[RMDB]
The record gives the reactivity of an RNA of 177 nucleotides to DMS.
The DMS profile rests on 1,122 reads.
Conditions: 150 mM KOAc, 10 mM MgCl2 and 150 mM bicine (pH 8.5), 24 C.
RNA sequence: GGGAACGACUCGAGUAGAGUCGAAAAAUGGUUGGCCAAUCGUUCGAGGCAAUGAAAAACGAAGCGACAUGGAGUCGCCUAUUCUCCAAAGUUGCGAGGCCACGUGGGCCCCAGCUGGCGCGGCGAAAAAUCAGUGACUGUUCGCAGUCACUGAUUUAAAAGAAACAACAACAACAAC
Reactivity to DMS in 0.01 (KOAc 150mM, MgCl2 10mM, bicine 150mM(pH8.5), 24C), signal-to-noise 2, nucleotides 027 to 126: a010u000g000g020u000u020g020g020c000c030a170a190u000c020g010u000u000c030g000a120g030g000c150a090a060u010g000a090a080a100a040a050c050g000a070a200g000c020g010a020c030a200u000g000g010a070g020u000c060g000c020c030u020a050u010u000c010u010c000c030a050a050a140g010u000u000g010c040g020a210g010g010c010c000a060c090g000u000g020g010g010c000c010c020c090a050g050c080u010g000g000c050g000c040g010g000c040g010a040a040